[RMDB]
Source: RMDB library M2RFPK, as collected in RNAgym. Structure probing data (2A3 and DMS) for a 207-nucleotide construct. 2A3 is a SHAPE reagent: it acylates the 2'-hydroxyl of flexible nucleotides of all four kinds. Reactivities are rounded to 0.1 and cut off at 0 and 3. DMS adducts were read by reverse transcription with MarathonRT.
RNA sequence: GGGAACGACUCGAGUAGAGUCGAAAAAGCAGGAGUACGCUCCUGCAUGGGUAGACGAAUUGACCCCAACUGAAGUUCAAUUCUAACGUUAAAAGGAGUUUUAUAUGCCUGGACGUACGCGUCCAGAUGACGAUUUCAUUCUUCGGAAUGAAAUCAACACGAAUGAUUAGUUCGCUAAUCAUUCGUGAAAAGAAACAACAACAACAAC
Reactivity to 2A3 in 0.01 (KOAc 150mM, MgCl2 10mM, bicine 150mM(pH8.5), 24C), signal-to-noise 3, nucleotides 027 to 156: a000g000c000a010g000g020a020g000u040a040c190g030c060u000c000c000u000g000c000a010u010g000g000g020u150a130g040a190c070g010a010a000u000u010g000a010c000c010c000c020a060a040c180u270g060a020a010g010u070u000c000a000a000u000u000c010u100a140a070c160g100u140u180a070a070a040a000g160g020a110g000u060u040u100u070a190u050a060u130g070c010c000u000g000g000a000c000g000u040a010c250g000c010g090u000c000c000a000g000a020u060g030a020c080g000a000u010u000u010c010a000u000u010c010u020u040c100g050g000a000a000u000g000a000a000a010u000c000a000a030
Reactivity to DMS in 0.01 (KOAc 150mM, MgCl2 10mM, bicine 150mM(pH8.5), 24C), signal-to-noise 1, nucleotides 027 to 156: a090g030c020a030g000g000a060g080u000a080c270g040c010u010c000c010u000g000c000a030u000g020g000g000u000a110g010a160c090g010a060a030u010u000g000a080c010c000c010c040a050a300c130u010g000a050a080g010u000u000c060a000a020u000u000c010u000a070a090c060g010u000u000a150a020a100a170g000g000a220g000u000u030u000u020a060u020a100u040g020c040c000u000g000g010a020c000g000u000a030c250g030c010g000u000c010c000a050g000a020u000g000a120c120g000a070u010u000u000c010a000u000u000c000u000u000c300g070g030a010a010u010g010a000a000a020u000c000a020a160